[RMDB]
RNA sequence: GGGAACGACUCGAGUAGAGUCGAAAACAUGGCCGCAAUGGAGAAGGGGAUUUCGUAGGUUUCUAGAGGAAUUGUCGAAAGAAGGCGUCAUAGCAGACAAGAGUUUUUUUGUCGACUCUCCAGACGCUCGAUUACGAGGCUUCGGCCUCGUAAUCGAAAAAGAAACAACAACAACAAC
Reactivity to 2A3 in 0.01 (KOAc 150mM, MgCl2 10mM, bicine 150mM(pH8.5), 24C), signal-to-noise 2, nucleotides 027 to 126: c060a100u160g040g000c050c060g030c060a030a140u080g000g090a110g030a150a070g000g060g000g000a080u260u000u000c060g120u110a010g000g080u060u010u020c020u030a100g050a090g020g040a090a020u130u020g140u070c000g060a060a000a060g030a070a000g070g020c020g030u000c020a140u140a080g020c110a030g090a110c010a100a050g050a000g000u150u000u020u000u000u120u000g230u000c010g010a030c000u000c000u060c170c000a040g000a000c120g060c000
Reactivity to DMS in 0.01 (KOAc 150mM, MgCl2 10mM, bicine 150mM(pH8.5), 24C), signal-to-noise 2, nucleotides 027 to 126: c090a130u000g060g020c050c030g000c110a130a120u000g000g000a070g000a030a110g030g000g000g000a090u000u000u030c050g010u020a110g000g040u030u000u000c040u000a000g000a190g000g000a030a030u000u000g000u000c000g000a050a090a120g000a120a060g040g020c010g040u000c000a020u040a060g000c300a150g000a030c000a080a040g030a070g000u000u010u010u000u030u010u000g030u000c000g000a090c090u000c070u000c100c010a180g000a040c080g020c050